[RMDB]
RNA sequence: GGGAACGACUCGAGUAGAGUCGAAAAAUCGCCGAGGCGGCCACGAUCAAUGGCACGGGCUCGGCGCCGGCAUCGCAGAUGAACGCCGACGGGCUGAUCACCGCCGAACUGGUGGCCGAGCUGGCCAGUUCAUUAGUCAGUUCGCUGACUAAUGAACAAAAGAAACAACAACAACAAC
Reactivity to 2A3 in 0.01 (KOAc 150mM, MgCl2 10mM, bicine 150mM(pH8.5), 24C), signal-to-noise 9, nucleotides 027 to 126: a000u080c020g010c010c010g020a080g070g050c030g020g020c020c020a060c060g090a110u140c090a130a130u090g020g000c060a070c130g050g020g010c000u000c000g000g000c010g000c000c000g000g000c020a110u050c050g060c150a060g040a170u090g030a130a030c070g010c040c000g060a100c100g050g010g000c030u060g020a060u050c000a010c040c040g050c030c010g000a060a020c020u050g040g000u030g140g000c010c010g010a020g010c020u040g020g000c010c000a020
Reactivity to DMS in 0.01 (KOAc 150mM, MgCl2 10mM, bicine 150mM(pH8.5), 24C), signal-to-noise 4, nucleotides 027 to 126: a060u020c040g020c000c010g020a060g020g000c030g000g010c010c020a050c100g000a110u070c170a080a250u010g010g010c000a050c040g000g010g010c030u000c000g010g020c040g010c070c030g000g010c050a090u010c020g000c170a140g000a070u020g020a070a120c180g000c040c000g010a100c210g000g010g000c020u000g000a070u020c010a070c050c080g000c070c020g020a120a200c110u010g000g010u010g000g000c030c010g000a110g000c020u010g000g010c000c100a090